[RMDB]
RNA sequence: GGGAACGACUCGAGUAGAGUCGAAAAGAUAUGGAAGAAUGGUGCAAGGACCAGGUCGGAAACGACCUGAAGUCUGAUGACCACUGCAUUCUUCCUAAGUCAAACUACCUAACUUCGGUUAGGUAGACUUUAAAGAGGACUUCGGUCCUCUUUAAAGAAAAGAAACAACAACAACAAC
Reactivity to DMS in 0.01 (KOAc 150mM, MgCl2 10mM, bicine 150mM(pH8.5), 24C), signal-to-noise 5, nucleotides 027 to 126: g000a020u000a120u010g000g000a010a000g010a020a030u010g010g010u000g000c060a100a080g000g010a030c010c000a020g000g000u000c000g010g010a030a030a090c000g000a010c000c000u000g000a060a110g010u000c000u000g010a050u000g000a060c300c000a020c030u000g010c080a070u000u000c000u000u000c000c000u000a010a070g000u000c010a170a140a240c010u000a000c000c000u000a000a010c000u000u020c270g020g020u000u000a010g010g000u000a000g010a100
Reactivity to 2A3 in 0.01 (KOAc 150mM, MgCl2 10mM, bicine 150mM(pH8.5), 24C), signal-to-noise 2, nucleotides 027 to 126: g010a000u020a000u060g010g020a010a010g000a040a060u080g000g010u040g040c140a250a190g030g000a000c010c000a020g000g010u000c010g020g050a030a020a020c000g000a000c000c000u000g000a050a020g010u000c000u020g080a190u140g040a040c040c010a000c020u090g060c030a060u020u040c000u020u000c000c000u010a030a000g020u020c030a000a090a190c000u000a000c010c000u000a010a010c000u060u070c300g160g010u000u010a000g000g000u000a000g000a000
This 177-nucleotide RNA was probed chemically with DMS and 2A3. Conditions: 150 mM KOAc, 10 mM MgCl2 and 150 mM bicine (pH 8.5), 24 C. It was measured as part of the RMDB library TTRDES. 2A3 is a SHAPE reagent: it acylates the 2'-hydroxyl of flexible nucleotides of all four kinds.